[RMDB]
RNA sequence: GGGAACGACUCGAGUAGAGUCGAAAACCCACGACUUUCGAGUCGUGGGAAAUAUAAUCAGCGGUAAAUAAUUAGCUCCGCUUACCGCUGAAGCGGACCAUACACGUCUAGGAUUCGUCCUAGACAAGUAUGCCGAUGAAUUCGUUCAUCGGCAUACAAAAGAAACAACAACAACAAC
Reactivity to 2A3 in 0.01 (KOAc 150mM, MgCl2 10mM, bicine 150mM(pH8.5), 24C), signal-to-noise 3, nucleotides 027 to 126: c000c000c000a000c010g000a000c010u050u100u210c210g070a010g010u000c000g000u000g010g000g020a000a070a000u250a010u020a030a170u040c000a010g000c020g010g070u090a030a080a070u140a080a230u190u170a030g070c040u010c040c020g040c000u000u010a070c010c000g000c000u000g000a010a000g040c030g030g030a010c000c020a050u100a160c100a000c100g010u000c000u000a000g000g000a010u080u050c180g030u070c040c010u000a010g000a000c000a010a000
Reactivity to DMS in 0.01 (KOAc 150mM, MgCl2 10mM, bicine 150mM(pH8.5), 24C), signal-to-noise 2, nucleotides 027 to 126: c000c000c000a010c020g020a000c000u000u000u000c130g020a000g020u000c000g010u000g000g020g000a000a010a040u000a080u020a130a090u010c000a000g000c010g000g000u000a020a040a070u000a050a100u000u010a170g020c080u010c020c020g030c080u000u000a000c000c000g010c000u000g010a030a040g000c130g000g000a100c170c050a070u010a080c230a070c210g010u000c000u000a000g010g010a050u000u010c260g030u000c000c000u020a020g000a000c000a030a120

This 177-nucleotide RNA was probed chemically with 2A3 and DMS. Reactivities are given for positions 27 through 126. The RNA was probed in 150 mM KOAc, 10 mM MgCl2 and 150 mM bicine (pH 8.5) at 24 C.